[RMDB]
RNA sequence: GGGAACGACUCGAGUAGAGUCGAAAAGCGCCGACAAUGUAGCGGGGCUCAAGUACACCGCCGAAGCCGCGGCAUUCACAUAACACCCAUGCGGGUCUACGGGCCUGUGUGCAGUGGUGUGGAUGGGGAUCGUUCAAGCUUUCGAGCUUGAACGAUCAAAAGAAACAACAACAACAAC
Reactivity to DMS in 0.01 (KOAc 150mM, MgCl2 10mM, bicine 150mM(pH8.5), 24C), signal-to-noise 2, nucleotides 027 to 126: g000c050g030c000c010g000a120c080a150a080u060g000u010a090g000c000g000g000g000g010c010u020c190a130a090g000u030a100c150a130c020c050g000c020c020g010a100a130g000c040c110g000c000g000g050c010a020u040u010c000a000c000a000u000a010a100c040a020c000c300c000a000u000g000c040g030g000g010u000c000u050a040c160g010g000g040c000c000u000g000u000g040u020g000c240a060g040u010g000g000u000g000u000g000g010a010u000g000g000g010
Reactivity to 2A3 in 0.01 (KOAc 150mM, MgCl2 10mM, bicine 150mM(pH8.5), 24C), signal-to-noise 3, nucleotides 027 to 126: g040c100g080c030c000g030a060c050a180a130u300g050u220a040g020c000g010g000g030g000c020u020c040a040a050g040u050a040c040a010c020c010g000c010c000g230a110a010g070c100c060g010c020g000g000c010a000u000u010c010a010c000a000u050a120a050c000a000c010c000c000a000u020g010c000g000g030g000u020c010u040a130c200g040g000g010c000c010u010g000u000g000u000g000c060a020g010u000g000g010u000g010u000g000g000a010u020g020g030g050
This 177-nucleotide RNA was probed chemically with DMS and 2A3. The DMS profile rests on 2,037 reads. The RNA was probed in 150 mM KOAc, 10 mM MgCl2 and 150 mM bicine (pH 8.5) at 24 C.